[RMDB]
RNA sequence: GGGAACGACUCGAGUAGAGUCGAAAAGCCGCAAUAAUAGCCGUAUCGGUUGCAGAUGCGAUAAAAUCAUUGUCCGAUUUAUGUUUAUCUGAUUCAAUUAGUUUUUCUAUUUGAUUUCUAAGUUCUUCUUUUACUUUAGUCAUUACUGUAUCGGCGGCGUAUCUGACAUUUUCGAAUGUCAGAUACGAAAAGAAACAACAACAACAAC
Reactivity to 2A3 in 0.01 (KOAc 150mM, MgCl2 10mM, bicine 150mM(pH8.5), 24C), signal-to-noise 3, nucleotides 027 to 156: g070c020c030g020c150a020a020u190a220a040u040a050g000c010c010g020u040a090u090c080g030g000u010u020g010c010a010g010a030u010g000c020g040a020u110a030a090a020a030u060c040a040u050u200g050u100c030c040g030a010u000u110u060a120u140g050u010u140u080a080u030c030u060g040a060u000u040c020a020a020u040u010a040g060u030u070u090u190u210c010u010a060u050u000u010g030a050u150u140u000c030u040a070a070g030u090u040c020u100u040c020u020u240u030u090a060c020u070u050u050a030g040u050c010a060u080u180a040c010u040g000u100a020u090c010g010g000c010g010g000
Reactivity to DMS in 0.01 (KOAc 150mM, MgCl2 10mM, bicine 150mM(pH8.5), 24C), signal-to-noise 1, nucleotides 027 to 156: g020c020c020g030c100a090a070u010a110a210u010a080g060c000c020g000u000a020u000c060g030g010u000u010g030c000a080g010a030u000g020c080g020a150u010a080a060a060a080u010c050a090u010u010g000u000c050c040g000a070u000u000u010a080u020g000u000u000u010a060u010c040u000g010a080u000u000c010a030a060u000u000a070g000u000u000u000u020u000c010u000a050u010u000u010g000a090u000u000u000c010u000a030a050g020u010u010c020u000u000c020u000u000u010u000a070c090u000u000u000a040g050u010c060a080u000u000a040c060u040g000u000a080u000c000g010g070c020g010g030
Background
Chemical mapping of a 207-nucleotide RNA with 2A3 and DMS. DMS (dimethyl sulfate) methylates the pairing face of unpaired adenines and cytosines. The reactions ran in a buffer of 150 mM KOAc, 10 mM MgCl2 and 150 mM bicine (pH 8.5), at 24 C. For 2A3 the reverse transcriptase was SuperScript II with manganese.